[RMDB]
RNA sequence: GGGAACGACUCGAGUAGAGUCGAAAAGCCGAUGAAUUGGCGAGAAGCCUGGCUCGAAAUCGUCGACGCAUCGACGACGGUCCUGCCAUGAGACCGUAACGAGGACAUGUCGCCUCGAAUGGCGUCGUAUAACAUGAGUGGUUCGCCACUCAUGUAAUCAUAGUGGGAUAUUCGUAUCCCACUAUGAAAAAGAAACAACAACAACAAC
Reactivity to DMS in 0.01 (KOAc 150mM, MgCl2 10mM, bicine 150mM(pH8.5), 24C), signal-to-noise 3, nucleotides 027 to 156: g020c010c000g010a080u000g020a100a110u000u000g000g000c000g000a100g020a150a140g020c030c040u000g020g030c040u000c040g000a050a110a070u010c000g020u000c000g020a070c140g010c110a130u000c000g010a020c010g010a050c000g010g000u000c010c020u000g030c010c150a080u000g000a100g010a040c000c020g030u000a060a090c040g000a070g030g000a070c040a160u010g020u000c070g010c010c000u010c020g000a120a100u010g000g010c010g020u000c030g010u000a110u000a120a070c000a010u010g000a020g010u010g000g020u000u000c290g030c000c010a010c000u000c000a000u010g010u000a020a130
Reactivity to 2A3 in 0.01 (KOAc 150mM, MgCl2 10mM, bicine 150mM(pH8.5), 24C), signal-to-noise 6, nucleotides 027 to 156: g010c000c010g030a060u140g080a070a240u170u110g020g000c030g000a060g110a120a020g020c020c040u050g040g000c030u040c070g080a090a100a120u010c010g010u000c000g010a050c070g020c130a120u060c010g000a000c000g000a000c000g000g000u000c000c010u040g020c000c000a020u040g020a020g000a060c010c010g020u040a010a010c000g010a000g000g000a020c030a160u220g010u160c120g010c010c000u010c020g020a010a020u020g020g020c000g020u050c040g000u030a080u060a200a020c000a010u000g000a000g000u000g040g000u070u050c170g030c040c000a000c000u000c000a000u000g010u000a000a010
The data come from the RNA Mapping Database (RMDB), library M2RFPK. An RNA of 207 nucleotides, treated with DMS and 2A3 and read out base by base. DMS adducts were read by reverse transcription with MarathonRT. The reactions ran in a buffer of 150 mM KOAc, 10 mM MgCl2 and 150 mM bicine (pH 8.5), at 24 C. DMS (dimethyl sulfate) methylates the pairing face of unpaired adenines and cytosines. 2A3 adducts were read by reverse transcription with SuperScript II with manganese.